[RMDB]
RNA sequence: GGGAACGACUCGAGUAGAGUCGAAAAGCGUUACAUCUGGUUACAAAAAGGGGGUGAACGAUUUGGCGUAACUGAUUUGGAAGAUGAAUCCAAACCGGAUAGAUAUCAGCCUUUUUAUCGCGCUGAAUCUCAGCCCGAUGGCAUCGUUUCCGUCGACUCACGGACAAGAGUUCGCUCUUGUCCGUGAAAAAGAAACAACAACAACAAC
Reactivity to 2A3 in 0.01 (KOAc 150mM, MgCl2 10mM, bicine 150mM(pH8.5), 24C), signal-to-noise 1, nucleotides 027 to 156: g050c020g040u050u000a000c000a030u030c040u120g000g040u070u060a090c080a020a040a080a120a140g050g030g000g020g000u020g000a030a050c060g000a010u000u010u010g000g000c020g020u060a100a020c050u030g070a100u030u030u120g070g000a020a080g090a140u170g080a120a050u010c000c000a110a000a110c080c030g060g000a000u100a040g120a040u140a040u090c060a040g060c000c000u120u110u040u070u060a090u110c040g000c010g020c000u000g000a000a010u010c110u080c090a070g000c010c000c070g000a030u000g000g000c010a030u030c020g000u010u050u040c040c020g010u090c010g000a020c010